[RMDB]
The record gives the reactivity of an RNA of 177 nucleotides to DMS.
The DMS profile rests on 2,596 reads.
Values cover nucleotides 27 to 126.
RNA sequence: GGGAACGACUCGAGUAGAGUCGAAAAGAUAUGGACGUCGCCACAUCCACAGUGGGACAUGCUAUAAUGGUCGGAAACGACCAAAAAUAGCAACAGCCCACUGUGGAUGUGGCCGCGUCCUAAGUCAUCCUUAUGCUUAGUUCGCUAAGCAUAAGGAAAAAGAAACAACAACAACAAC
Reactivity to DMS in 0.01 (KOAc 150mM, MgCl2 10mM, bicine 150mM(pH8.5), 24C), signal-to-noise 4, nucleotides 027 to 126: g010a010u000a300u020g010g020a020c010g040u000c300g000c000c000a000c010a010u000c000c000a020c000a020g000u000g010g020g000a010c110a230u000g010c010u000a000u000a090a300u010g000g000u000c010g020g000a080a150a260c000g010a010c000c000a000a000a030a100a010u000a000g020c000a040a050c300a130g000c000c000c000a010c000u000g000u000g000g020a000u000g010u000g000g020c000c010g010c000g000u000c000c010u000a000a070g000u000c030a150